[RMDB]
RNA sequence: GGGAACGACUCGAGUAGAGUCGAAAAACAGUGCCCUCAUAACUGGGUUCGAACGUUACCUGCUUAGGACCCAGUAGGAACUUCUCCAUGUCGUGCGUGUACUCUUGACAUAGCAGGUACAGAUCGAAUCGGGUACUCACCGUAUGCAAUCCGUAAGAAGUUAGUUCCAGUUCGCUGGAACUAACUUAAAAGAAACAACAACAACAAC
Reactivity to DMS in 0.01 (KOAc 150mM, MgCl2 10mM, bicine 150mM(pH8.5), 24C), signal-to-noise 1, nucleotides 027 to 156: a060c080a070g040u000g000c020c010c040u010c090a230u030a150a070c030u000g000g010g000u000u000c010g000a100a110c110g030u010u000a080c050c080u030g030c040u000u020a170g030g000a030c020c000c010a040g010u000a050g000g010a080a030c040u000u000c060u000c030c020a110u020g000u000c150g020u000g030c080g030u000g000u000a090c070u000c010u020u010g080a080c050a100u000a100g010c010a050g000g020u000a130c080a080g000a110u020c040g030a070a150u000c020g020g010g000u000a080c080u010c110a080c100c040g030u000a090u000g000c060a050a050u000c020c030g010u000a100a100g010
Reactivity to 2A3 in 0.01 (KOAc 150mM, MgCl2 10mM, bicine 150mM(pH8.5), 24C), signal-to-noise 2, nucleotides 027 to 156: a000c050a030g060u040g120c010c020c000u080c070a190u160a180a020c020u030g000g030g030u000u000c010g000a070a040c070g050u070u050a020c010c010u050g000c020u050u080a010g020g000a020c000c000c000a000g000u000a000g010g010a010a110c040u170u070c020u060c050c040a060u040g050u160c010g020u090g040c010g020u060g010u040a030c000u020c030u130u160g000a040c020a130u130a020g000c020a020g010g000u020a020c080a040g100a090u130c040g030a080a030u030c020g020g000g000u010a020c020u030c050a080c020c040g020u060a050u060g000c030a050a190u060c050c040g010u060a110a070g110

Chemical mapping of a 207-nucleotide RNA with DMS and 2A3. The DMS profile rests on 2,424 reads. Conditions: 150 mM KOAc, 10 mM MgCl2 and 150 mM bicine (pH 8.5), 24 C. The data come from the RNA Mapping Database (RMDB), library OK3TST.